An RNA of 177 nucleotides, treated with DMS and 2A3 and read out base by base. Values are in units of 0.01, from 0 to 300, in steps of 10. For 2A3, 2,229 sequencing reads were counted. The RNA was probed in 150 mM KOAc, 10 mM MgCl2 and 150 mM bicine (pH 8.5) at 24 C.
RNA sequence: GGGAACGACUCGAGUAGAGUCGAAAAGAUAUGGAGAACUUGAUAAUAGCUACUGGCCACUCGGAAACGAGUGGGCCUGUAGCUGUAUUAAAGUUCUCCUAAGUCAAAACACGCCUUCGGGCGUGAAGAAUAUGCCACAGUUCGCUGUGGCAUAUUCAAAAGAAACAACAACAACAAC
Reactivity to DMS in 0.01 (KOAc 150mM, MgCl2 10mM, bicine 150mM(pH8.5), 24C), signal-to-noise 2, nucleotides 027 to 126: g010a050u010a300u010g010g000a020g010a020a030c000u000u020g010a050u000a030a060u000a030g010c010u000a000c000u000g000g040c000c000a010c000u000c000g000g010a120a080a160c000g030a000g030u010g000g020g000c010c000u010g000u000a020g010c000u000g040u000a000u000u000a060a030a020g000u000u000c000u000c000c000u000a020a080g010u000c000a070a070a110a150c010a000c060g000c000c000u000u000c200g020g010g050c000g020u000g000a020a090
Reactivity to 2A3 in 0.01 (KOAc 150mM, MgCl2 10mM, bicine 150mM(pH8.5), 24C), signal-to-noise 1, nucleotides 027 to 126: g040a020u130a050u180g010g000a010g000a010a010c030u010u020g010a000u050a300a100u070a120g020c000u000a010c040u030g000g000c020c000a010c010u020c010g020g040a130a110a080c000g000a000g030u010g030g090g000c020c010u010g000u000a000g050c000u000g000u000a000u000u040a230a040a000g010u010u010c000u000c000c000u000a010a000g000u020c000a000a030a060a060c000a010c000g010c000c030u040u100c300g170g000g000c000g000u000g020a000a000